An RNA of 177 nucleotides, treated with DMS and 2A3 and read out base by base. The RNA was probed in 150 mM KOAc, 10 mM MgCl2 and 150 mM bicine (pH 8.5) at 24 C. For DMS, 4,132 sequencing reads were counted.
[RMDB]
RNA sequence: GGGAACGACUCGAGUAGAGUCGAAAAGAUAUGGACCCAUCUACCCACCCUAUUUACACACUGCAAUGAUGGGCUUCGGAAACGAAGCCUUGAGCAGGGUGUAAAUAGGAGGAUGGGUCCUAAGUCAGUAAUCAAAAAAGUUCGCUUUUUUGAUUACAAAAGAAACAACAACAACAAC
Reactivity to DMS in 0.01 (KOAc 150mM, MgCl2 10mM, bicine 150mM(pH8.5), 24C), signal-to-noise 4, nucleotides 027 to 126: g020a150u010a210u000g000g010a020c000c000c000a020u010c010u010a170c020c020c050a300c110c000c000u000a000u000u000u000a010c000a000c010a010c000u000g010c000a220a200u010g020a130u000g010g010g010c000u000u000c000g000g000a170a080a270c000g010a000a020g020c000c000u000u000g010a140g020c000a010g000g000g020u000g010u000a000a000a000u000a010g000g000a020g000g000a010u010g000g020g010u000c000c000u000a010a070g010u000c150a120
Reactivity to 2A3 in 0.01 (KOAc 150mM, MgCl2 10mM, bicine 150mM(pH8.5), 24C), signal-to-noise 2, nucleotides 027 to 126: g100a070u270a210u300g000g000a000c000c030c000a000u010c010u160a300c020c010c010a040c020c010c000u000a010u000u010u010a000c000a000c000a000c000u000g000c000a130a300u160g030a030u080g060g000g000c030u020u010c000g000g030a100a080a070c010g000a010a000g020c010c000u000u000g000a010g000c000a000g010g000g000u010g000u010a000a010a000u000a000g010g000a010g000g000a000u000g010g020g000u000c000c000u000a000a000g000u010c010a010
Source: RMDB library TTRINS, as collected in RNAgym. 2A3 adducts were read by reverse transcription with SuperScript II with manganese.